[RMDB]
RNA sequence: GGGAACGACUCGAGUAGAGUCGAAAAAGAUCACUGCCAAUCGGCAGCAAGUGAUGCGGCAGAAUAUGAAGCUGAAAAGACACCUGGCACAGGAUAAAGUCAAAGUAAGAGUAGCGGAAGAGGUGGACUACCUCUACAGUUUCGACUGUAGAGGUAGAAAAGAAACAACAACAACAAC
Reactivity to 2A3 in 0.01 (KOAc 150mM, MgCl2 10mM, bicine 150mM(pH8.5), 24C), signal-to-noise 3, nucleotides 027 to 126: a000g050a010u090c040a010c050u020g000c010c020a130a240u190c080g020g000c030a020g030c020a070a040g060u040g100a010u050g020c020g010g000c030a010g070a130a020u220a060u300g060a050a030g020c030u000g040a070a040a030a030g050a020c010a040c040c020u060g110g030c060a050c020a130g050g030a030u100a110a110a010g020u030c030a070a070a000g060u040a050a010g100a000g060u070a020g050c010g050g010a010a010g030a040g010g040u050g030g000a020
Reactivity to DMS in 0.01 (KOAc 150mM, MgCl2 10mM, bicine 150mM(pH8.5), 24C), signal-to-noise 5, nucleotides 027 to 126: a080g000a090u000c050a110c010u000g000c010c010a140a110u000c140g010g020c040a080g010c090a070a090g030u000g020a060u000g010c060g010g010c030a020g010a080a100u000a090u000g010a120a120g000c030u000g010a070a090a080a120g010a060c040a080c030c030u000g000g020c080a090c070a050g010g010a080u000a040a080a090g010u000c030a040a080a050g010u000a030a060g010a080g010u000a050g010c060g010g000a060a050g010a040g000g020u000g010g000a260
This 177-nucleotide RNA was probed chemically with 2A3 and DMS. Values cover nucleotides 27 to 126. In probing experiments dimethyl sulfate is read out at A N1 and C N3, which are open when not base-paired. Reactivities are rounded to 0.1 and cut off at 0 and 3. For DMS, 5,067 sequencing reads were counted. The RNA was probed in 150 mM KOAc, 10 mM MgCl2 and 150 mM bicine (pH 8.5) at 24 C.